[RMDB]
RNA sequence: GGGAACGACUCGAGUAGAGUCGAAAAUCAUUAAGAUGCUGGGCGCUAUGGUCGUCCUCCUCCGGCUGACCUCCUUCUCAGCUGCUGACCGGCGCCGCACAGGCGGCAUCUCAGCUUCGUGUGCAAAAAAAGAAUGGUCGGUUCGCCGACCAUUCAACAUAUGAUGUUUCUUCGGAAACAUCAUAUGAAAAGAAACAACAACAACAAC
Reactivity to DMS in 0.01 (KOAc 150mM, MgCl2 10mM, bicine 150mM(pH8.5), 24C), signal-to-noise 3, nucleotides 027 to 156: u020c070a090u010u000a050a060g010a020u000g000c020u000g010g020g030c020g030c020u000a070u010g060g010u000c010g020u000c050c060u000c040c030u010c070c010g010g020c010u010g010a030c070c100u010c160c110u000u000c070u000c010a030g010c000u000g010c060u010g000a020c020c020g000g000c020g020c000c000g040c060a070c090a090g020g010c040g030g000c010a020u000c020u000c040a080g000c090u000u000c070g010u000g020u000g040c020a000a010a090a100a080a110a190g000a030a010u000g010g010u000c010g010g020u010u000c300g040c020c010g010a010c000c010a000u000u000c010a030a160
Reactivity to 2A3 in 0.01 (KOAc 150mM, MgCl2 10mM, bicine 150mM(pH8.5), 24C), signal-to-noise 4, nucleotides 027 to 156: u060c010a010u130u160a090a040g020a020u050g000c040u080g040g030g000c000g010c040u090a110u300g030g010u030c020g040u050c010c050u040c000c000u060c030c030g010g000c010u010g000a030c020c050u140c030c030u230u070c040u020c030a010g010c010u020g010c070u070g010a020c000c020g010g000c010g020c010c030g000c010a050c010a030g120g040c000g000g010c010a020u030c020u020c070a050g010c030u130u120c090g120u080g030u060g080c050a030a060a030a070a000a030a030g000a000a000u000g000g000u000c010g000g040u050u060c200g030c040c000g000a000c000c000a000u010u010c000a000a000
Structure probing data (DMS and 2A3) for a 207-nucleotide construct.
For 2A3, 3,655 sequencing reads were counted.
Reactivities are given for positions 27 through 156.